[RMDB]
RNA sequence: GGGAACGACUCGAGUAGAGUCGAAAACGUUUAAGAGUGAUGGCGUGCCUUUUGCAGAAUGAACCGGCGAGUUAUGAUAUAGAGCAAGGUUAAGUUUGAAGGAACGUAGCCGGAGCGAAAGCGAGUCUAACUCAAGAAACUUCGGUUUCUUGAGUUAAAAAGAAACAACAACAACAAC
Reactivity to 2A3 in 0.01 (KOAc 150mM, MgCl2 10mM, bicine 150mM(pH8.5), 24C), signal-to-noise 3, nucleotides 027 to 126: c040g010u070u140u160a160a040g070a060g060u080g050a110u120g000g000c050g030u070g000c000c020u020u050u060u050g000c020a030g050a270a140u060g010a190a220c000c010g010g010c040g010a020g030u020u030a130u240g020a020u040a010u040a110g110a000g050c010a090a050g170g030u150u160a110a070g000u000u030u080g030a020a010g090g030a020a020c000g000u030a010g000c000c000g010g000a000g000c000g030a040a010a010g010c010g020a020g010u000c000
Reactivity to DMS in 0.01 (KOAc 150mM, MgCl2 10mM, bicine 150mM(pH8.5), 24C), signal-to-noise 7, nucleotides 027 to 126: c080g020u010u010u010a090a110g010a090g020u000g010a100u010g010g020c040g010u000g020c090c020u010u000u000u010g010c040a100g010a080a080u010g010a090a140c030c020g000g000c020g000a170g010u000u000a030u010g010a090u000a130u010a160g000a120g000c040a070a100g030g010u010u010a070a120g010u010u000u000g000a220a230g000g000a020a010c020g000u010a270g010c010c010g020g010a150g000c030g020a030a040a060g010c040g000a080g000u000c060
Chemical mapping of a 177-nucleotide RNA with 2A3 and DMS. The 2A3 profile rests on 2,757 reads. The data come from the RNA Mapping Database (RMDB), library OK2TST. DMS adducts were read by reverse transcription with MarathonRT. Values cover nucleotides 27 to 126.